Structure probing data (2A3 and DMS) for a 177-nucleotide construct.
DMS adducts were read by reverse transcription with MarathonRT.
The DMS profile rests on 103,033 reads.
RNA sequence: GGGAACGACUCGAGUAGAGUCGAAAAUCUGUUGAGAUUUGUGAUCGUAAAGUCAUAGUGGGACUAUGGUCACAGCAACAGAAGUCAGAUUGCGAGUAGUCCCACGGACUAGUCUGAGUCAUGACCACUUCUCGAGUGUAUUCGUACAUUCGAGAAGAAAAGAAACAACAACAACAAC
Reactivity to 2A3 in 0.01 (KOAc 150mM, MgCl2 10mM, bicine 150mM(pH8.5), 24C), signal-to-noise 9, nucleotides 027 to 126: u010c020u020g120u080u160g180a130g020a200u050u080u090g000u030g010a020u030c020g030u090a100a140a120g010u010c020a080u170a170g100u110g110g070g000a000c000u010a010u040g040g040u100c060a040c030a080g000c000a000a020c010a030g130a160a010g060u030c030a020g060a270u020u050g060c020g010a030g020u000a000g000u000c010c000c010a020c080g000g000a000c000u020a020g130u000c070u100g030a020g050u010c020a060u030g040a020c010c010a040
Reactivity to DMS in 0.01 (KOAc 150mM, MgCl2 10mM, bicine 150mM(pH8.5), 24C), signal-to-noise 9, nucleotides 027 to 126: u000c000u000g010u000u010g010a060g010a080u000u000u000g020u000g010a040u000c020g010u000a110a110a070g010u000c010a090u010a140g030u000g010g010g010a020c000u000a040u000g010g010u000c070a050c080a090g010c020a040a020c050a090g010a080a110g010u010c130a090g000a150u000u000g010c080g010a100g000u000a010g000u000c000c000c070a060c090g000g010a020c000u000a070g000u000c040u010g010a070g010u000c010a060u000g000a190c010c060a230